[RMDB]
RNA sequence: GGGAACGACUCGAGUAGAGUCGAAAACCACAUAUCUUCGGAUAUGUGGAAAUAAGGGAAUCGGAUUAUUCCGGUCGACUCCGGAGAAACAAAGUCAAAUAAAAAGCAUCUUCUUCGGAAGAUGCAAGUACUCCACUCAGUUCGCUGAGUGGAGUACAAAAGAAACAACAACAACAAC
Reactivity to 2A3 in 0.01 (KOAc 150mM, MgCl2 10mM, bicine 150mM(pH8.5), 24C), signal-to-noise 1, nucleotides 027 to 126: c000c000a000c000a010u010a000u000c020u030u110c180g100g000a000u000a000u000g000u010g000g130a020a110a050u140a070a050g080g030g040a060a130u060c100g070g000a020u080u040a190u300u000c000c000g000g030u020c010g020a010c120u090c300c000g000g000a000g140a020a040a000c010a020a000a000g010u010c040a010a040a060u140a050a080a030a010a050g010c010a000u000c000u000u000c000u020u070c220g100g000a000a000g000a000u000g000c000a010a020

Source information
Structure probing data (2A3) for a 177-nucleotide construct. 2A3 adducts were read by reverse transcription with SuperScript II with manganese. For 2A3, 1,028 sequencing reads were counted. It was measured as part of the RMDB library M2PK50. The RNA was probed in 150 mM KOAc, 10 mM MgCl2 and 150 mM bicine (pH 8.5) at 24 C.